[RMDB]
RNA sequence: GGGAACGACUCGAGUAGAGUCGAAAAAGGUAAGCGGUCGUGCCCUGCUGGCGCCGCGGGCCGCUGCGAGCGCCUCUCCCGGCUGGGGACGUGCGUGCGAGCGCGCGCGUGGGGGCUCCGUGCCCCAAAGAUCAAAACGUUUCGACGUUUUGAUCUUAAAAGAAACAACAACAACAAC
Reactivity to 2A3 in 0.01 (KOAc 150mM, MgCl2 10mM, bicine 150mM(pH8.5), 24C), signal-to-noise 1, nucleotides 027 to 126: a010g120g050u170a110a020g030c000g040g000u170c080g070u110g040c020c000c020u040g020c050u100g040g010c060g000c040c000g180c030g000g030g000c000c020g140c050u010g000c020g010a040g000c090g020c000c010u060c040u040c000c000c000g020g090c110u160g000g010g000g000a020c010g000u000g030c010g000u030g030c100g080a100g150c040g000c000g020c000g050c000g070u030g050g010g000g000g040c020u030c060c110g080u160g050c020c010c000c010a050
Reactivity to DMS in 0.01 (KOAc 150mM, MgCl2 10mM, bicine 150mM(pH8.5), 24C), signal-to-noise 2, nucleotides 027 to 126: a050g000g010u010a070a160g020c020g000g010u010c020g040u010g010c020c000c010u000g020c090u000g010g000c040g040c050c040g020c050g010g010g010c080c070g020c010u000g020c040g000a140g000c090g020c010c010u000c100u000c010c010c000g030g010c130u000g010g000g010g000a050c020g010u010g010c010g010u000g000c110g010a150g000c070g030c000g010c000g010c020g040u000g010g010g020g000g000c000u010c150c140g000u010g010c000c010c010c030a050